Source: RMDB library M2PK50, as collected in RNAgym.
This 177-nucleotide RNA was probed chemically with 2A3 and DMS.

RNA sequence: GGGAACGACUCGAGUAGAGUCGAAAAGGGCGCUAGUUCGCUAGCGCCCAAACAACACUACUCUCUUCAGUAGUGAUAAUAAAUAAUCUGAAGAGUACAUAAAAAGACUCUCGUUCGCGAGAGUCAACGUUAGUAAGUCGUUCGCGACUUACUAACGAAAAGAAACAACAACAACAAC
Reactivity to 2A3 in 0.01 (KOAc 150mM, MgCl2 10mM, bicine 150mM(pH8.5), 24C), signal-to-noise 2, nucleotides 027 to 126: g000g010g050c010g010c000u000a000g010u050u040c130g000c110u010a000g030c010g000c000c010c000a000a000a000c010a010a000c010a010c000u060a010c010u020c000u000c000u070u020c020a020g000u030a000g030u030g040a010u060a140a040u080a010a120a030u130a050a020u080c060u010g000a010a000g000a000g020u120a050c050a080u240a100a150a000a020a020g010a000c000u000c010u010c010g020u030u060c250g010c000g090a000g000a000g010u000c000a000a010
Reactivity to DMS in 0.01 (KOAc 150mM, MgCl2 10mM, bicine 150mM(pH8.5), 24C), signal-to-noise 1, nucleotides 027 to 126: g020g000g040c020g020c000u000a000g000u000u000c170g020c000u000a000g020c000g040c030c000c000a000a050a050c080a000a250c040a010c050u010a010c090u000c000u000c000u000u000c000a020g000u000a040g010u000g000a070u010a070a070u020a010a070a070u000a110a060u010c040u000g010a010a010g000a030g010u020a070c240a070u020a040a110a090a110a090g010a000c000u000c000u000c000g000u010u000c140g040c000g010a000g010a010g000u000c000a020a100
In probing experiments dimethyl sulfate is read out at A N1 and C N3, which are open when not base-paired. The reactions ran in a buffer of 150 mM KOAc, 10 mM MgCl2 and 150 mM bicine (pH 8.5), at 24 C. For DMS, 1,010 sequencing reads were counted.